[RMDB]
RNA sequence: GGGAACGACUCGAGUAGAGUCGAAAAACCUGGUGAAGGAUCAGAUAAGCAACAAGGCGAUGGCAUGCCCUCUGCUGGAAGGCCUGAAGCCAGUCCCACCUGAGCUUCCAGUGAGACAAGCUGAAGGCAAUCGCUAGGGCUUCGGCCCUAGCGAUUGAAAAGAAACAACAACAACAAC
Reactivity to DMS in 0.01 (KOAc 150mM, MgCl2 10mM, bicine 150mM(pH8.5), 24C), signal-to-noise 1, nucleotides 027 to 126: a060c230c010u000g020g010u000g020a240a070g010g000a110u000c020a050g000a210u000a100a050g000c030a030a060c190a110a030g010g030c040g010a100u010g080g020c100a050u030g000c000c000c060u000c140u010g030c000u000g000g000a110a070g000g010c000c010u000g000a080a080g010c010c050a060g010u000c010c000c000a150c200c070u010g000a160g010c070u010u030c040c000a060g000u020g000a100g000a070c200a060a070g000c000u000g000a170a060g000g030
Chemical mapping of a 177-nucleotide RNA with DMS. The DMS profile rests on 574 reads. Reactivities are rounded to 0.1 and cut off at 0 and 3. It was measured as part of the RMDB library OK2TST.